Chemical mapping of a 177-nucleotide RNA with DMS and 2A3.
Values cover nucleotides 27 to 126.
The reactions ran in a buffer of 150 mM KOAc, 10 mM MgCl2 and 150 mM bicine (pH 8.5), at 24 C.
Source: RMDB library RFMREP, as collected in RNAgym.
2A3 adducts were read by reverse transcription with SuperScript II with manganese.
For 2A3, 4,191 sequencing reads were counted.
RNA sequence: GGGAACGACUCGAGUAGAGUCGAAAAGUUCGUGUUCGCACGAACAAAAAGGUGAUGAGCACUCUCGAACCUGACGGGCAGGAUGAUGAGCGGAUUCCUGGCUGAUAAAUCUGACGUUCGCGUCAGAGCAUACGUAAGUCUUCGGACUUACGUAUGCAAAAGAAACAACAACAACAAC
Reactivity to DMS in 0.01 (KOAc 150mM, MgCl2 10mM, bicine 150mM(pH8.5), 24C), signal-to-noise 2, nucleotides 027 to 126: g000u000u000c000g030u000g010u000u020c270g010c040a010c000g000a000a000c030a020a070a040a110a060g000g020u000g010a130u000g020a080g030c210a120c300u010c020u010c030g030a110a100c010c010u010g000a140c110g000g000g000c050a030g010g000a050u000g010a160u020g010a110g010c140g020g000a170u000u000c000c010u000g000g000c010u030g010a080u020a030a100a140u000c000u000g000a010c010g000u000u000c250g000c030g000u020c000a000g010a080
Reactivity to 2A3 in 0.01 (KOAc 150mM, MgCl2 10mM, bicine 150mM(pH8.5), 24C), signal-to-noise 3, nucleotides 027 to 126: g010u010u010c000g000u010g040u030u070c160g020c070a000c020g000a030a000c020a040a060a000a000a020g090g000u100g010a190u120g020a040g040c090a050c140u210c010u020c040g020a030a020c020c010u040g040a060c030g020g000g020c000a000g010g010a020u050g010a020u100g070a030g110c070g020g050a020u050u010c000c000u050g070g060c000u030g000a090u130a100a090a040u000c000u000g010a000c010g040u020u050c220g020c000g060u000c000a000g000a020